[RMDB]
RNA sequence: GGGAACGACUCGAGUAGAGUCGAAAAGGACUUUGAUUUAGACCCAAUCAAGGAACCAGAAGUUACCCACUAUGAUGCAAAUUGGGAGACAGAGUCUAUUGGGAGAGGAGAGGAUACUAGGUAUAUGGGCAUCGAAACAGUUCGCUGUUUCGAUGCCAAAAGAAACAACAACAACAAC
Reactivity to 2A3 in 0.01 (KOAc 150mM, MgCl2 10mM, bicine 150mM(pH8.5), 24C), signal-to-noise 2, nucleotides 027 to 126: g130g000a000c000u000u000u000g000a020u140u100u110a170g050a290c030c010c030a000a000u000c000a000a060g090g060a040a150c000c030a040g070a170a100g210u080u240a200c000c010c000a080c030u160a150u120g070a040u110g000c000a000a030a200u060u000g030g000g010a040g050a020c030a110g050a000g030u000c010u060a110u000u220g020g020g010a130g000a000g040g000a040g000a000g060g000a020u030a180c120u000a020g080g140u020a060u000a020u150g130

Source: RMDB library OK1LIB, as collected in RNAgym. Structure probing data (2A3) for a 177-nucleotide construct. The reactions ran in a buffer of 150 mM KOAc, 10 mM MgCl2 and 150 mM bicine (pH 8.5), at 24 C.